[RMDB]
RNA sequence: GGGAACGACUCGAGUAGAGUCGAAAAGAAGAGCAGGCAGAUAAUCUUGUGCAGUAUGCAUGCUCCUACCUCCACACGAAGUAAGGCAGCAAAAGAAUAACUGCCACUGCACAAGUGGAGCCGCAGAGACGAUUUAGCACUUCGGUGCUAAAUCGUCAAAAGAAACAACAACAACAAC
Reactivity to 2A3 in 0.01 (KOAc 150mM, MgCl2 10mM, bicine 150mM(pH8.5), 24C), signal-to-noise 2, nucleotides 027 to 126: g220a000a060g050a040g000c110a100g080g000c010a000g040a120u070a200a120u150c020u030u010g000u000g030c040a000g020u070a050u210g010c000a000u090g000c020u000c010c000u040a040c000c000u000c010c100a230c020a030c160g040a020a000g040u060a020a170g070g030c100a000g000c010a020a160a000a050g200a050a070u070a080a080c020u040g000c000c000a000c000u000g060c000a040c000a000a000g000u000g000g030a030g010c030c000g000c050a000g060a000
Reactivity to DMS in 0.01 (KOAc 150mM, MgCl2 10mM, bicine 150mM(pH8.5), 24C), signal-to-noise 1, nucleotides 027 to 126: g050a090a060g000a130g000c000a170g060g020c000a050g000a210u000a110a260u000c000u000u030g060u000g060c000a000g020u000a140u070g000c010a050u000g000c000u000c030c000u000a180c030c020u000c020c160a160c230a160c290g030a060a120g000u000a000a000g010g000c030a000g040c150a030a080a000a270g040a150a020u000a240a000c150u030g000c000c170a030c000u050g000c060a000c030a100a100g000u010g010g000a110g000c010c000g030c010a140g000a120

Conditions: 150 mM KOAc, 10 mM MgCl2 and 150 mM bicine (pH 8.5), 24 C. Structure probing data (2A3 and DMS) for a 177-nucleotide construct. DMS adducts were read by reverse transcription with MarathonRT. For DMS, 995 sequencing reads were counted.